RNA sequence: GGGAACGACUCGAGUAGAGUCGAAAAUGAUGGACAAAGUAUUCGCUACAUGGUGGUCUAUCUGUUGUGGCUGGGGUUUAGCUAACUUCGUCUUCAAUGGUGGAGAUAAUCCUUGGACUUUGGUAGGCGCGAGCAUCUACUUCCUCCUAUUCAUCGGAAUAGUAUCGUGUUUCGACACGAUACUAUUAAAAGAAACAACAACAACAAC
Reactivity to DMS in 0.01 (KOAc 150mM, MgCl2 10mM, bicine 150mM(pH8.5), 24C), signal-to-noise 3, nucleotides 027 to 156: u010g020a070u000g000g000a060c030a120a100a130g020u000a080u000u010c150g020c050u010a060c070a100u010g020g010u000g010g010u000c030u010a050u000c040u010g020u000u000g010u000g000g020c040u000g030g030g020g010u000u000u000a060g000c080u000a090a070c030u000u000c020g020u000c020u000u010c080a040a110u000g020g010u000g030g020a070g010a090u000a040a090u010c030c030u000u010g040g000a080c030u010u000u000g040g020u000a050g020g010c050g050c090g000a090g040c040a070u000c050u000a030c040u010u000c050c030u000c020c020u000a100u010u000c020a070u000c080g010g000
Reactivity to 2A3 in 0.01 (KOAc 150mM, MgCl2 10mM, bicine 150mM(pH8.5), 24C), signal-to-noise 5, nucleotides 027 to 156: u090g010a010u050g010g020a020c040a040a080a040g080u050a130u070u150c090g020c070u090a060c060a100u110g040g030u050g030g040u040c040u040a080u020c030u050g070u030u070g030u040g050g000c020u040g030g000g000g000u030u030u080a020g000c010u020a000a060c010u060u050c030g020u000c010u110u060c090a050a150u140g070g000u040g000g040a040g010a030u110a050a060u070c020c000u020u050g020g020a060c000u060u050u050g010g020u060a030g010g020c030g000c010g060a010g010c010a020u000c010u020a040c020u050u030c000c000u020c000c000u050a060u070u070c070a090u100c070g030g040
Chemical mapping of a 207-nucleotide RNA with DMS and 2A3. Conditions: 150 mM KOAc, 10 mM MgCl2 and 150 mM bicine (pH 8.5), 24 C. The 2A3 profile rests on 3,527 reads. The data come from the RNA Mapping Database (RMDB), library OK3TST. The DMS profile rests on 10,016 reads.